[RMDB]
RNA sequence: GGGAACGACUCGAGUAGAGUCGAAAAAGGAGCCCAGAACACCUCUGCUCCUGAGGAGUUGAGUGGGGAGAGGGGUCAACUGGAGCUGGAGUUCAGUAUGGCCAUGGGCACCCUGAUCUCGGAGCUGAUCCCUCGUAAAAUUCGUUUUACGAGGGAUAAAAGAAACAACAACAACAAC
Reactivity to 2A3 in 0.01 (KOAc 150mM, MgCl2 10mM, bicine 150mM(pH8.5), 24C), signal-to-noise 3, nucleotides 027 to 126: a000g030g000a000g000c020c000c020a020g060a050a040c050a030c000c000u030c010u090g130c010u090c000c030u050g070a210g120g050a120g060u200u170g100a060g030u200g020g000g050g000a030g010a020g040g060g030g010u010c010a010a030c010u020g030g000a040g130c100u150g170g030a160g010u000u020c000a010g000u040a240u130g000g000c010c000a050u010g000g020g000c000a050c040c000c040u040g020a050u000c000u010c010g040g060a060g020c090u070g050
Reactivity to DMS in 0.01 (KOAc 150mM, MgCl2 10mM, bicine 150mM(pH8.5), 24C), signal-to-noise 3, nucleotides 027 to 126: a050g010g000a250g010c020c020c000a060g000a170a120c240a280c030c000u000c000u000g010c010u000c000c020u000g010a070g020g010a070g000u000u010g010a070g010u000g030g000g010g000a050g010a060g000g000g030g010u000c020a020a050c030u010g010g010a030g000c090u000g010g000a120g000u000u000c010a010g000u000a120u000g000g010c010c020a160u000g000g000g000c030a090c070c050c010u000g000a060u000c010u000c010g010g000a100g000c080u000g010